[RMDB]
RNA sequence: GGGAACGACUCGAGUAGAGUCGAAAAAAUAAUUUCGAAAUGGGAAACAGAAAUUACGAAUACUGGCCUUAGUAUGAAGUUUCAGUCUUAAGAAUAAGGUUAGAGUGUAUAAAAUAAUAACGAAUCCCUUUCAAUUUCUGGUGCAACAUGUGAAAGAUAUUAGUCAUACUUUCGAGUAUGACUAAUAAAAAGAAACAACAACAACAAC
Reactivity to DMS in 0.01 (KOAc 150mM, MgCl2 10mM, bicine 150mM(pH8.5), 24C), signal-to-noise 2, nucleotides 027 to 156: a140a060u020a080a020u000u010u020c030g040a020a060a040u020g070g010g000a110a090a260c060a140g010a100a100a040u000u000a030c010g010a210a070u000a120c010u000g000g020c010c000u010u010a010g000u010a130u010g010a080a090g000u000u000u000c150a160g000u010c030u000u000a060a090g020a110a140u000a000a000g020g020u010u000a070g000a180g020u000g020u010a100u010a050a050a110a090u000a020a030u010a050a290c090g000a140a250u000c010c000c010u000u000u010c030a020a080u000u000u000c020u010g000g030u000g010c060a050a060c020a020u000g000u010g010a120a060a070g010a220
Reactivity to 2A3 in 0.01 (KOAc 150mM, MgCl2 10mM, bicine 150mM(pH8.5), 24C), signal-to-noise 2, nucleotides 027 to 156: a000a020u130a010a010u030u100u160c040g020a040a020a080u140g020g000g010a140a000a000c020a020g050a010a200a030u110u050a040c040g040a030a030u040a120c000u020g000g000c000c000u000u000a000g030u050a070u120g090a020a010g010u080u300u260c060a040g040u030c020u030u030a040a030g030a140a130u010a030a020g010g030u000u010a080g000a020g120u090g040u020a070u070a130a070a000a070u120a040a020u060a100a000c020g010a020a020u010c010c030c000u010u070u010c010a030a040u010u040u050c010u100g000g050u030g070c100a120a060c010a150u170g030u070g120a070a050a050g120a020
Conditions: 150 mM KOAc, 10 mM MgCl2 and 150 mM bicine (pH 8.5), 24 C. Structure probing data (DMS and 2A3) for a 207-nucleotide construct. 2A3 is a SHAPE reagent: it acylates the 2'-hydroxyl of flexible nucleotides of all four kinds. The 2A3 profile rests on 1,105 reads.